[RMDB]
RNA sequence: GGGAACGACUCGAGUAGAGUCGAAAAGUCAGCUUGUUCGCAAGCUGACAAACUGGACACACCCACACCCAGGCGAAGCCGUGUCAAAAUGGGUGUGGCUAAAAAGGACACUGUUCGCAGUGUCCAAGCUAUGGGUACCGUUCGCGGUACCCAUAGCAAAAGAAACAACAACAACAAC
Reactivity to DMS in 0.01 (KOAc 150mM, MgCl2 10mM, bicine 150mM(pH8.5), 24C), signal-to-noise 1, nucleotides 027 to 126: g030u010c000a000g000c020u000u000g010u000u060c110g080c000a040a020g030c010u000g010a000c000a000a030a030c140u000g020g000a030c060a040c020a110c280c010c000a030c070a030c050c020c000a120g010g020c100g000a120a040g000c060c090g030u010g000u000c100a120a080a240a160u000g010g010g010u010g000u000g020g000c190u000a010a090a060a050a030g020g000a010c000a000c000u010g000u000u000c140g000c000a010g010u000g000u010c000c000a060a030
Reactivity to 2A3 in 0.01 (KOAc 150mM, MgCl2 10mM, bicine 150mM(pH8.5), 24C), signal-to-noise 2, nucleotides 027 to 126: g010u000c000a000g010c000u060u010g070u070u130c220g020c140a000a000g000c000u000g000a000c000a000a000a000c000u040g110g030a030c030a000c000a010c080c000c000a000c010a000c010c000c000a020g070g000c070g100a140a060g050c040c080g130u130g050u120c000a080a160a000a130u060g000g000g000u000g000u010g000g010c000u060a100a080a020a060a040g000g000a000c010a000c010u010g050u110u070c260g000c110a000g000u000g000u000c000c000a000a000